[RMDB]
RNA sequence: GGGAACGACUCGAGUAGAGUCGAAAAGCCACCGACUACGUCGACGUUCAGAUCUCACUCGACGGCGCCACGGCCGAGGUCAACGACGCCAUCCGCGGCACCGGGUCGUUCGACAUGGCGGUGCGCGCUUACAUCGUUACUUCGGUAACGAUGUAAGAAAAGAAACAACAACAACAAC
Reactivity to DMS in 0.01 (KOAc 150mM, MgCl2 10mM, bicine 150mM(pH8.5), 24C), signal-to-noise 9, nucleotides 027 to 126: g010c020c010a050c040c010g010a110c020u000a070c110g010u000c000g010a030c050g010u000u010c100a140g010a070u010c140u010c150a090c180u000c030g000a120c040g010g010c020g020c010c010a030c030g010g010c130c060g010a110g020g000u000c050a080a100c120g000a070c080g010c020c030a120u000c030c030g010c050g010g010c030a060c050c020g000g000g000u000c010g010u010u000c020g010a020c010a100u000g000g010c010g010g010u000g000c110g020c020g010
Reactivity to 2A3 in 0.01 (KOAc 150mM, MgCl2 10mM, bicine 150mM(pH8.5), 24C), signal-to-noise 9, nucleotides 027 to 126: g020c010c010a020c010c010g160a240c030u060a030c100g020u010c010g010a010c020g030u090u150c060a070g010a180u050c100u050c190a090c070u060c030g080a040c000g030g000c010g000c000c010a010c010g030g000c040c060g120a180g020g050u060c050a120a090c180g140a040c070g030c040c000a040u030c020c020g000c020g020g000c010a010c010c020g030g000g060u040c010g030u120u080c010g000a000c010a030u090g010g000c010g000g000u010g000c120g000c000g000

An RNA of 177 nucleotides, treated with DMS and 2A3 and read out base by base. For 2A3 the reverse transcriptase was SuperScript II with manganese. DMS adducts were read by reverse transcription with MarathonRT. The reactions ran in a buffer of 150 mM KOAc, 10 mM MgCl2 and 150 mM bicine (pH 8.5), at 24 C. The DMS profile rests on 29,396 reads.